[RMDB]
Description:
This 177-nucleotide RNA was probed chemically with DMS and 2A3. The RNA was probed in 150 mM KOAc, 10 mM MgCl2 and 150 mM bicine (pH 8.5) at 24 C. Source: RMDB library TTRDES, as collected in RNAgym. For 2A3 the reverse transcriptase was SuperScript II with manganese. The DMS profile rests on 1,339 reads.

RNA sequence: GGGAACGACUCGAGUAGAGUCGAAAAGAUAUGGAUCCUUGGGACAUGCUGCUACAUUCGGAAACGAAUGGUCAGCAACAGCCCAACAUGGAUCCUAAGUCAAAGGAAACUGCUUCGGCAGUUUCCAUCUUCAGUUAUGCUUCGGCAUAACUGAAGAAAAAGAAACAACAACAACAAC
Reactivity to DMS in 0.01 (KOAc 150mM, MgCl2 10mM, bicine 150mM(pH8.5), 24C), signal-to-noise 2, nucleotides 027 to 126: g010a030u000a300u020g000g010a020u000c000c000u000u010g020g000g000a060c040a240u000g000c070u020g010c030u020a070c000a000u000u000c000g000g000a110a100a170c000g000a010a000u000g010g000u000c180a000g020c010a060a010c090a070g010c000c000c010a010a050c300a110u030g000g010a000u020c020c000u020a050a090g020u030c040a060a130a210g000g000a010a000a010c000u000g020c000u000u010c200g040g000c010a020g020u000u000u010c000c000a060
Reactivity to 2A3 in 0.01 (KOAc 150mM, MgCl2 10mM, bicine 150mM(pH8.5), 24C), signal-to-noise 2, nucleotides 027 to 126: g020a020u020a040u060g000g010a010u020c020c000u020u030g020g000g000a030c210a300u300g030c010u010g000c030u170a140c080a010u010u000c000g000g000a010a050a020c000g000a010a000u010g000g100u160c030a020g000c060a030a020c070a060g010c000c000c000a010a020c090a120u110g000g000a010u000c000c000u000a000a020g010u000c100a180a130a130g020g000a020a000a000c020u000g040c010u040u170c300g160g000c000a000g000u000u010u000c000c000a010